[RMDB]
Source: RMDB library OK3TST, as collected in RNAgym. Structure probing data (2A3 and DMS) for a 207-nucleotide construct. The DMS profile rests on 4,265 reads. The reactions ran in a buffer of 150 mM KOAc, 10 mM MgCl2 and 150 mM bicine (pH 8.5), at 24 C. For DMS the reverse transcriptase was MarathonRT. 2A3 adducts were read by reverse transcription with SuperScript II with manganese. High DMS reactivity at an A or C suggests that its Watson-Crick edge is free.
RNA sequence: GGGAACGACUCGAGUAGAGUCGAAAAGCCACCCAGGCUGGAGUGCAGUGGUUCAAUCUCAGCAACCUCUGCCUCUUGGGUUAAAGUGAUUCUCGUACCUCAGCCUCGGCCUUCCAAAGUGCUGAGAUUACAGGCAUGAGCCACCGUGCCUGGCCAACACGAUUGGUAGAUUCGUCUACCAAUCGUGAAAAGAAACAACAACAACAAC
Reactivity to 2A3 in 0.01 (KOAc 150mM, MgCl2 10mM, bicine 150mM(pH8.5), 24C), signal-to-noise 4, nucleotides 027 to 156: g030c020c010a040c030c030c000a000g040g020c020u050g030g020a040g020u240g020c000a000g000u010g020g000u000u020c060a110a070u060c070u030c070a020g020c020a020a000c000c010u010c010u010g010c000c010u000c010u020u070g030g000g000u050u140a060a060a060g060u080g110a250u230u050c080u040c060g080u080a050c000c010u040c020a010g000c000c020u010c020g010g020c020c010u130u090c030c030a120a090a030g100u070g050c000u000g000a000g000a010u020u070a020c010a020g000g000c020a000u020g010a030g080c040c030a060c070c020g000u010g000c000c010u010g020g010c010c050a060a040
Reactivity to DMS in 0.01 (KOAc 150mM, MgCl2 10mM, bicine 150mM(pH8.5), 24C), signal-to-noise 2, nucleotides 027 to 156: g040c100c020a060c100c020c030a120g000g040c020u000g010g020a040g010u010g060c010a050g000u010g020g000u010u010c040a090a120u010c000u010c080a170g020c030a030a060c020c000u010c000u000g010c000c050u000c030u000u020g000g000g030u000u010a060a030a090g000u010g010a190u010u000c030u000c030g020u000a080c060c000u010c080a080g000c060c020u010c130g020g000c020c030u060u000c100c070a060a080a090g020u010g000c000u000g000a030g020a050u000u000a070c040a040g000g040c000a040u000g020a160g000c090c020a050c040c040g040u000g010c000c000u010g000g000c040c030a060a230